[RMDB]
The data come from the RNA Mapping Database (RMDB), library M2PK50. Structure probing data (2A3 and DMS) for a 177-nucleotide construct. Values cover nucleotides 27 to 126.
RNA sequence: GGGAACGACUCGAGUAGAGUCGAAAAUCUCCGUGAUUCGUCACGGAGAAACAUAAAUAAAAUGGGUUCAACUCCCACCCUUUUCCGAGGGUUUCGGAAACCAACCUUCGCUCUUCGGAGCGAAGAAGAUUUAUUAAGUCUUCGGACUUAAUAAAUCAAAAGAAACAACAACAACAAC
Reactivity to 2A3 in 0.01 (KOAc 150mM, MgCl2 10mM, bicine 150mM(pH8.5), 24C), signal-to-noise 3, nucleotides 027 to 126: u010c000u000c010c000g010u000g010a010u040u110c170g010u010c130a000c010g000g020a020g000a000a010a000c010a020u300a080a090a020u250a090a120a050a060u050g030g000g000u090u140c020a050a040c050u010c020c000c000a010c000c000c000u020u080u040u050c010c000g010a010g000g020g030u040u070u000c010g000g000a030a000a000c040c030a020a050c000c020u000u000c000g020c010u010c000u040u090c270g110g000a000g000c030g000a000a000g010a000a010
Reactivity to DMS in 0.01 (KOAc 150mM, MgCl2 10mM, bicine 150mM(pH8.5), 24C), signal-to-noise 2, nucleotides 027 to 126: u000c010u000c000c000g040u000g000a040u000u020c130g030u000c010a000c000g000g000a000g010a000a070a040c110a100u000a130a110a080u000a050a040a100a120u010g010g020g000u000u000c160a080a300c180u010c010c010c000a220c010c000c030u010u000u000u020c010c010g000a010g010g000g020u000u010u040c020g020g010a000a010a090c240c040a030a090c090c000u000u000c020g000c000u000c000u000u020c180g010g000a010g020c000g020a000a000g000a010a040
For DMS the reverse transcriptase was MarathonRT.